[RMDB]
RNA sequence: GGGAACGACUCGAGUAGAGUCGAAAAGAACGCGGCACCAUGGAGGCUCUGCUCUCUACGGAGAUUACCCGCACGGAACUGCUGCUGUGUAAGCUGAUCCCUUAUUACUUUCUCGGGAUGCUGGCGAGAGCCUCACUGAUUUCGAUCAGUGAGGCUCAAAAGAAACAACAACAACAAC
Reactivity to DMS in 0.01 (KOAc 150mM, MgCl2 10mM, bicine 150mM(pH8.5), 24C), signal-to-noise 2, nucleotides 027 to 126: g000a070a090c050g000c010g000g010c030a100c010c010a140u010g000g010a300g010g000c020u000c060u000g000c100u000c010u000c010u000a090c110g010g010a040g020a040u010u000a080c100c020c050g000c050a060c110g000g010a130a140c110u000g010c020u000g010c020u000g020u010g000u000a100a100g000c030u000g010a060u000c030c080c030u010u020a040u000u010a120c130u000u000u010c070u000c100g010g020g010a080u000g000c040u000g000g010c080g010a130
Reactivity to 2A3 in 0.01 (KOAc 150mM, MgCl2 10mM, bicine 150mM(pH8.5), 24C), signal-to-noise 2, nucleotides 027 to 126: g050a070a010c060g000c000g020g000c000a000c020c030a050u080g080g020a080g020g030c000u020c030u050g000c010u000c010u000c000u040a060c140g070g000a020g000a020u020u040a060c000c000c010g020c060a020c000g060g000a080a020c080u070g040c010u020g000c070u070g080u020g020u140a080a020g020c040u020g080a050u000c020c000c050u020u120a120u030u110a140c090u170u160u060c080u020c010g080g000g010a030u060g040c070u110g000g040c040g000a050
The data come from the RNA Mapping Database (RMDB), library OK2TST. An RNA of 177 nucleotides, treated with DMS and 2A3 and read out base by base. Values cover nucleotides 27 to 126. For DMS, 1,830 sequencing reads were counted. For DMS the reverse transcriptase was MarathonRT.